Conditions: 150 mM KOAc, 10 mM MgCl2 and 150 mM bicine (pH 8.5), 24 C. An RNA of 177 nucleotides, treated with DMS and 2A3 and read out base by base. It was measured as part of the RMDB libraries RFM100 and RFMREP. DMS adducts were read by reverse transcription with MarathonRT.
RNA sequence: GGGAACGACUCGAGUAGAGUCGAAAAACCAACCUUUCAUCGUUCCCUUCUUUGCAAUAACGCUGUUUUGCAAAACCGUGAUAGUGCUGAGCCGAUGAGCCUCUAAUGAAAUUAUAGACUCAUCGGCCUAAAAACUGUGUUUCGACACAGUUUUUAGAAAAGAAACAACAACAACAAC
Reactivity to DMS in 0.01 (KOAc 150mM, MgCl2 10mM, bicine 150mM(pH8.5), 24C), signal-to-noise 9, nucleotides 027 to 126: a110c030c030a140a120c160c070u010u010u020c110a160u010c020g000u000u000c000c000c010u010u030c080u010u000u000g000c010a030a020u030a030a050c030g020c130u030g010u000u000u000u010g010c100a050a020a030a090c120c090g000u010g000a080u010a050g010u010g010c050u000g010a130g020c000c000g010a010u000g000a000g010c020c000u000c050u000a010a020u010g010a120a070a300u000u000a010u000a020g010a040c000u000c000a000u000c000g000g010c010
Reactivity to 2A3 in 0.01 (KOAc 150mM, MgCl2 10mM, bicine 150mM(pH8.5), 24C), signal-to-noise 9, nucleotides 027 to 126: a010c050c010a020a080c030c030u080u180u200c080a100u060c020g000u010u000c010c010c000u020u030c040u030u050u040g000c010a030a060u100a160a050c040g060c190u070g050u030u020u040u160g070c050a030a030a040a040c020c020g030u020g050a080u050a100g050u040g040c060u070g030a010g000c000c000g000a000u000g000a000g000c020c020u010c020u030a040a060u080g120a060a040a010u100u080a050u030a040g010a010c000u000c000a000u000c000g000g000c000